[RMDB]
RNA sequence: GGGAACGACUCGAGUAGAGUCGAAAACGGAUUCGACAGGCAUUAUGAGGCCUAUUUUGCAACUCAUCGGCAGAUGUAAAAAUGCCAGUUAAAUAUAACUGCAAAAAAUAACACAACUUACGCUUUAGCUGCCUAAAAACCAGCCGGCGUGACUUCUAUUAGUUAACUUGUUCGCAAGUUAACUAAUAAAAGAAACAACAACAACAAC
Reactivity to 2A3 in 0.01 (KOAc 150mM, MgCl2 10mM, bicine 150mM(pH8.5), 24C), signal-to-noise 9, nucleotides 027 to 156: c030g040g030a110u150u180c050g070a040c060a050g010g010c020a030u070u130a110u300g080a090g100g000c000c010u010a080u010u130u100u120g020c010a040a070c030u020c060a010u000c000g000g000c010a000g010a020u040g050u300a000a000a010a000a020u010g000c000c000a010g000u010u050a030a270a140u240a110u040a120a030c010u000g000c040a020a020a000a030a030a070u190a120a060c120a010c030a160a110c020u100u110a010c010g000c010u040u040u090a010g000c010u000g000c010c000u040a060a030a000a010a020c000c000a000g000c000c010g010g000c000g000u000g020a020c000u010u010c000u010
Reactivity to DMS in 0.01 (KOAc 150mM, MgCl2 10mM, bicine 150mM(pH8.5), 24C), signal-to-noise 2, nucleotides 027 to 156: c080g000g010a150u000u000c030g020a120c040a040g020g020c010a100u000u000a060u000g030a080g000g000c030c030u000a060u000u000u000u000g010c020a040a090c030u020c010a060u000c040g020g010c050a040g000a120u010g000u000a040a060a050a090a120u000g000c010c040a050g020u010u000a040a090a190u000a120u000a030a030c030u000g030c020a000a020a090a100a050a110u000a090a090c050a110c060a070a060c070u010u000a020c040g000c030u010u000u010a060g040c030u010g010c020c010u000a030a060a090a120a080c190c020a050g050c020c080g010g000c040g030u000g020a110c010u020u000c010u000